Structure probing data (2A3) for a 207-nucleotide construct. Reactivities are rounded to 0.1 and cut off at 0 and 3. 2A3 adducts were read by reverse transcription with SuperScript II with manganese. It was measured as part of the RMDB library M2RFPK. The reactions ran in a buffer of 150 mM KOAc, 10 mM MgCl2 and 150 mM bicine (pH 8.5), at 24 C.
[RMDB]
RNA sequence: GGGAACGACUCGAGUAGAGUCGAAAAAGUGGGUAUGGCUCGUUACGACGAGCCAUACUCACAACGGUUUUCCUAAAUCGUCGUGAGACGGACCUUGGAAAACCUAGUAUUUAAAUAACUAGGUCAAAUUAGCCUAGAUCCUUCGGGAUCUAGGCAAGACCGAUGAUAGGUUCGCCUAUCAUCGGUCAAAAGAAACAACAACAACAAC
Reactivity to 2A3 in 0.01 (KOAc 150mM, MgCl2 10mM, bicine 150mM(pH8.5), 24C), signal-to-noise 2, nucleotides 027 to 156: a000g000u020g010g000g030u010a010u000g000g000c000u010c020g010u020u030a050c290g010a000c010g000a090g000c000c000a000u000a000c000u000c000a030c000a000a000c000g000g020u000u000u000u000c000c000u000a000a000a000u040c000g010u000c000g020u020g120a080g000a030c020g010g000a000c000c000u030u050g000g000a000a000a000a000c000c000u000a000g020u010a050u040u130u140a180a190a100u160a140a020c080u040a020g020g000u000c040a000a030a220u190u190a060g000c000c000u000a000g000a000u000c000c000u010u130c190g050g010g000a000u000c000u000a000g000g000c000a000a000